[RMDB]
RNA sequence: GGGAACGACUCGAGUAGAGUCGAAAAGAUAUGGAUCCACACAGUUCCGAUAAGCUGUUACUCGGAAACGAGUACAGCUUUUGACGGAACUGGUGGAUCCUAAGUCAAAGCCUUCUUCGGAAGGCAAUCUUACGUCUAGGUUCGCCUAGACGUAAGAAAAAGAAACAACAACAACAAC
Reactivity to DMS in 0.01 (KOAc 150mM, MgCl2 10mM, bicine 150mM(pH8.5), 24C), signal-to-noise 4, nucleotides 027 to 126: g000a060u000a300u000g000g000a010u000c000c000a010c020a170c010a010g010u000u000c000c000g010a170u000a030a020g000c000u010g000u010u000a000c010u000c000g000g020a110a090a210c000g020a010g000u000a010c010a000g000c000u000u000u000u000g010a230c110g000g000a010a000c000u010g000g010u000g000g010a000u000c000c000u000a010a070g000u000c040a120a110a140g010c010c000u000u000c010u000u020c220g000g000a030a010g010g030c000a010a010
Reactivity to 2A3 in 0.01 (KOAc 150mM, MgCl2 10mM, bicine 150mM(pH8.5), 24C), signal-to-noise 2, nucleotides 027 to 126: g050a010u080a030u190g000g000a000u000c000c000a020c020a020c000a040g000u010u000c010c010g040a080u030a080a010g010c000u040g140u300u180a020c000u020c010g060g040a070a090a070c010g000a000g000u000a010c000a000g010c020u000u000u010u000g000a000c000g000g000a000a000c000u000g000g000u000g000g020a000u000c000c000u000a010a010g000u010c030a120a020a040g010c010c020u000u010c000u060u070c240g150g000a000a000g010g000c000a000a010
This 177-nucleotide RNA was probed chemically with DMS and 2A3. Source: RMDB library TTRDES, as collected in RNAgym. 2A3 adducts were read by reverse transcription with SuperScript II with manganese. The reactions ran in a buffer of 150 mM KOAc, 10 mM MgCl2 and 150 mM bicine (pH 8.5), at 24 C.